RNA sequence: GGGAACGACUCGAGUAGAGUCGAAAAUGAGGGAUGGGCUGGAUACUUACUCACGGCCGGAUGCGUUGUUAGGUCACGCCUGUCCUCACUCGAAGUCGUCCAUCCGUAUGAGUACAGGUAGGAUGGGAGUGAGCCAAGAAUUCGGUCCAGAGUGUUACCUUGACGUCUAGUUCGCUAGACGUCAAGGAAAAGAAACAACAACAACAAC
Reactivity to 2A3 in 0.01 (KOAc 150mM, MgCl2 10mM, bicine 150mM(pH8.5), 24C), signal-to-noise 2, nucleotides 027 to 156: u200g000a020g080g080g000a020u040g060g000g000c060u120g060g030a120u150a300c050u090u190a010c000u030c040a010c000g040g010c000c000g040g010a000u000g010c060g090u170u030g140u140u130a090g000g030u000c000a000c040g000c000c000u010g000u020c000c000u010c010a000c000u040c010g070a150a070g020u170c020g000u000c090c000a000u010c000c000g090u300a080u140g010a000g060u040a120c060a010g040g220u120a010g060g020a010u000g040g000g000a040g000u000g000a010g070c020c000a010a050g000a100a020u000u000c000g000g060u030c030c090a050g000a000g010u070g060u050u110a080